RNA sequence: GGGAACGACUCGAGUAGAGUCGAAAAAAAGAUAUGGAACCGUAACGAGCGAAGAACUCCAUCACAGCCAGUUCGGAAACGAACUGGUCACAGUGGAGGGAGCUCGGAGAAGGUUCCUAAGUCAAAACGUGGUAACUUAGUUCGCUAAGUUACCACGAAAAGAAACAACAACAACAAC
Reactivity to DMS in 0.01 (KOAc 150mM, MgCl2 10mM, bicine 150mM(pH8.5), 24C), signal-to-noise 1, nucleotides 027 to 126: a160a040a140g000a000u000a150u000g000g000a030a020c000c000g000u070a140a300c000g010a010g030c000g010a100a100g020a140a190c030u000c030c000a050u000c020a070c240a300g010c010c000a000g010u000u010c000g000g000a000a030a010c000g000a020a000c000u020g000g020u000c000a010c300a300g000u000g000g000a000g000g020g000a040g020c010u020c000g000g000a040g010a070a220g000g000u000u030c000c000u000a000a030g000u000c010a090a030a070a300